An RNA of 177 nucleotides, treated with DMS and 2A3 and read out base by base.

[RMDB]
RNA sequence: GGGAACGACUCGAGUAGAGUCGAAAACGCCGCGCGUCCAGCGCUUGAGUAUCUCGGUGGAUUCCCGUUCGUAGUCGAACCCGUGCGAUCGCGCCCACGACUUGCGGCGUCUGCUGCGCCCGCGGCGCAUCUUAGGGCGAUUCGUCGCCCUAAGAUGAAAAGAAACAACAACAACAAC
Reactivity to DMS in 0.01 (KOAc 150mM, MgCl2 10mM, bicine 150mM(pH8.5), 24C), signal-to-noise 8, nucleotides 027 to 126: c030g010c020c040g020c010g010c220g010u000c230c120a120g010c040g010c030u010u010g000a120g010u020a060u010c050u010c040g000g000u010g010g000a170u010u000c010c010c020g020u020u010c040g020u020a030g010u020c020g010a060a200c030c000c020g010u020g000c070g010a090u010c120g010c020g000c040c030c040a170c210g010a070c060u010u010g010c020g000g000c010g010u010c080u030g010c040u000g010c080g000c030c040c050g000c040g000g000c030g010
Reactivity to 2A3 in 0.01 (KOAc 150mM, MgCl2 10mM, bicine 150mM(pH8.5), 24C), signal-to-noise 9, nucleotides 027 to 126: c010g000c000c010g010c000g010c030g030u040c050c030a030g010c010g020c040u050u140g070a040g030u130a110u070c060u030c060g050g030u090g050g050a140u060u050c000c030c010g010u050u050c030g060u100a090g070u060c040g020a040a030c010c020c010g020u060g040c050g060a080u060c040g000c010g010c040c010c010a070c050g050a030c030u030u110g010c020g020g000c000g000u010c010u040g000c010u030g000c010g010c000c020c010g020c010g010g000c010g000
The 2A3 profile rests on 32,915 reads. For DMS the reverse transcriptase was MarathonRT. Conditions: 150 mM KOAc, 10 mM MgCl2 and 150 mM bicine (pH 8.5), 24 C. High 2A3 reactivity points to a flexible backbone, as in loops and unpaired stretches. For 2A3 the reverse transcriptase was SuperScript II with manganese.